[RMDB]
This 177-nucleotide RNA was probed chemically with 2A3 and DMS.
The RNA was probed in 150 mM KOAc, 10 mM MgCl2 and 150 mM bicine (pH 8.5) at 24 C.
The 2A3 profile rests on 3,722 reads.
DMS adducts were read by reverse transcription with MarathonRT.
The DMS profile rests on 2,603 reads.
RNA sequence: GGGAACGACUCGAGUAGAGUCGAAAAGAUAUGGAACACUAUGAAGGUGGUACCUAUGAAGGCGUUCCCAAUCUUCGGAAACGAAGAUUGGGAACGCUGGAGGUAUCACUGGAGUGUUCCUAAGUCAGAAUUGUAUAACGUUCGCGUUAUACAAUUCAAAAGAAACAACAACAACAAC
Reactivity to 2A3 in 0.01 (KOAc 150mM, MgCl2 10mM, bicine 150mM(pH8.5), 24C), signal-to-noise 2, nucleotides 027 to 126: g040a040u160a080u250g010g020a020a000c000a000c020u240a300u300g090a080a050g020g000u010g000g000u020a010c020c010u210a300u280g070a000a030g030g050c020g040u060u000c000c000c000a030a000u000c020u000u010c030g050g000a220a120a070c040g000a000a000g020a010u000u000g050g090g000a000a010c020g000c010u000g000g000a000g000g000u000a010u000c000a020c010u000g010g020a000g000u010g000u010u000c000c000u000a140a010g090u000c080a030
Reactivity to DMS in 0.01 (KOAc 150mM, MgCl2 10mM, bicine 150mM(pH8.5), 24C), signal-to-noise 2, nucleotides 027 to 126: g000a070u010a300u000g000g000a030a000c010a010c010u000a220u000g010a180a270g030g000u000g020g010u000a000c000c000u000a250u020g000a110a240g010g010c010g010u010u000c000c010c000a030a010u000c000u000u000c000g000g010a080a120a280c010g010a000a020g010a020u000u000g010g000g000a010a010c000g010c000u000g010g010a020g020g000u000a000u000c010a020c020u010g000g000a030g020u000g000u000u010c000c000u000a020a050g010u000c090a190